[RMDB]
RNA sequence: GGGAACGACUCGAGUAGAGUCGAAAAUUCGGUCCUGUGGAGCGGACCGUCUGCUCCGUCAGGAUGUGGAGGUAUCGCGCCCUCCUUUGCGCGUAUGUACAUCGAUACGGUUAUGUCGCCUUUGUGUCGGCGUUUGACACUUACACAUACCGGAUAAAAAUAUUUAGGACUUCGGUCCUAAAUAUUUAAAAGAAACAACAACAACAAC
Reactivity to 2A3 in 0.01 (KOAc 150mM, MgCl2 10mM, bicine 150mM(pH8.5), 24C), signal-to-noise 3, nucleotides 027 to 156: u050u030c020g020g020u000c010c000u010g000u050g010g000a010g020c030g010g050a130c160c020g040u040c000u000g010c010u020c010c000g150u120c000a010g000g030a020u050g010u040g030g010a030g000g040u050a020u060c000g000c010g000c000c000c000u030c010c010u010u040u040g030c050g010c030g020u130a040u070g070u030a040c040a090u020c090g190a140u080a270c110g020g030u090u060a020u080g090u060c030g020c040c010u060u060u010g090u040g030u060c020g020g090c120g010u040u060u120g000a000c000a010c000u000u080a010c010a000c000a020u060a060c000c010g000g030a030u160a050a150
Reactivity to DMS in 0.01 (KOAc 150mM, MgCl2 10mM, bicine 150mM(pH8.5), 24C), signal-to-noise 3, nucleotides 027 to 156: u000u000c020g010g020u000c010c000u000g050u000g000g000a050g030c030g030g020a190c140c270g000u010c010u000g000c000u000c010c000g000u010c040a060g020g000a060u000g020u000g000g010a050g000g010u000a040u000c040g000c040g010c090c010c010u010c020c010u000u000u000g010c060g030c070g010u000a040u010g010u010a050c090a140u010c060g010a230u000a080c090g000g030u000u000a040u010g010u000c060g040c040c060u010u000u000g010u010g040u000c020g030g030c170g040u000u010u010g010a040c010a020c010u010u000a040c030a030c010a060u000a070c010c000g010g010a080u020a010a100
This 207-nucleotide RNA was probed chemically with 2A3 and DMS. For DMS, 11,045 sequencing reads were counted. The reactions ran in a buffer of 150 mM KOAc, 10 mM MgCl2 and 150 mM bicine (pH 8.5), at 24 C. Source: RMDB library OK3TST, as collected in RNAgym.